[RMDB]
RNA sequence: GGGAACGACUCGAGUAGAGUCGAAAAGAUGCCACCACUGCAUAUGCCAAUAGUGUCUUUAACAUUUUGCAGGCGACAACUGCUAAUGUCAGUGCACUUAUGGGUGCUAAUGGCAACAAGAUUGUUGCCCUCAUAUUCCCUUCGGGGAAUAUGAGGGAAAAGAAACAACAACAACAAC
Reactivity to DMS in 0.01 (KOAc 150mM, MgCl2 10mM, bicine 150mM(pH8.5), 24C), signal-to-noise 2, nucleotides 027 to 126: g000a100u010g010c010c000a050c040c060a150c190u000g010c000a040u010a090u000g010c010c010a010a300u010a040g000u010g010u010c040u000u010u010a070a040c000a020u010u000u010u000g000c010a000g010g030c080g040a100c250a070a100c020u010g000c020u000a010a000u000g020u000c060a050g030u000g000c010a020c020u010u010a170u000g010g000g000u000g000c030u000a140a110u010g000g010c000a020a090c070a070a100g010a190u010u000g010u000u010g000
Reactivity to 2A3 in 0.01 (KOAc 150mM, MgCl2 10mM, bicine 150mM(pH8.5), 24C), signal-to-noise 2, nucleotides 027 to 126: g020a020u070g030c000c000a020c030c020a050c100u090g020c040a010u070a040u290g110c000c000a050a060u050a060g010u000g030u000c020u050u150u110a050a000c010a000u070u040u000u180g010c020a000g040g000c060g130a060c090a140a040c010u010g000c010u010a000a010u010g000u000c020a030g030u000g190c010a000c000u030u070a050u120g000g000g000u020g010c000u060a110a020u030g030g010c010a000a010c010a040a030g090a150u040u110g040u100u070g040